[RMDB]
RNA sequence: GGGAACGACUCGAGUAGAGUCGAAAAAUGUUGGUGAUAGUGCGGAAGUUGCAGUUAAAAUGUUUAAAAAAAACUUUUAACGUACCAAUGGAAAAACUCAAAACACUAGCUGCAACUGCAGAAGCUGCCAUAUUAGCAAGUUCGCUUGCUAAUAUGGAAAAGAAACAACAACAACAAC
Reactivity to DMS in 0.01 (KOAc 150mM, MgCl2 10mM, bicine 150mM(pH8.5), 24C), signal-to-noise 2, nucleotides 027 to 126: a110u020g010u000u000g010g010u000g010a140u000a030g020u000g030c040g020g000a220a040g000u020u000g000c010a090g000u010u000a010a050a080a100u010g000u000u000u040a000a010a010a150a060a010a100a060c040u080u000u000u000a030a090c060g010u010a040c160c060a050a080u000g030g010a060a040a030a090a040c120u000c220a000a060a010a050c020a000c100u000a030g010c010u000g000c010a030a030c030u000g020c110a090g030a070a160g000c020u000g000
Reactivity to 2A3 in 0.01 (KOAc 150mM, MgCl2 10mM, bicine 150mM(pH8.5), 24C), signal-to-noise 1, nucleotides 027 to 126: a000u050g010u030u040g050g000u050g020a070u070a100g090u040g030c030g040g020a040a000g000u010u030g000c000a010g010u000u050a040a060a090a160u090g000u000u080u170a070a010a030a010a000a000a000a010c090u110u090u040u070a100a020c000g000u020a090c000c010a020a030u040g010g000a100a090a000a040a020c050u050c070a060a060a000a000c070a010c060u030a000g020c020u030g000c020a000a010c000u030g000c000a000g020a140a010g010c010u000g000
Overview:
This 177-nucleotide RNA was probed chemically with DMS and 2A3. For 2A3 the reverse transcriptase was SuperScript II with manganese. The data come from the RNA Mapping Database (RMDB), library 15KREP. The reactions ran in a buffer of 150 mM KOAc, 10 mM MgCl2 and 150 mM bicine (pH 8.5), at 24 C.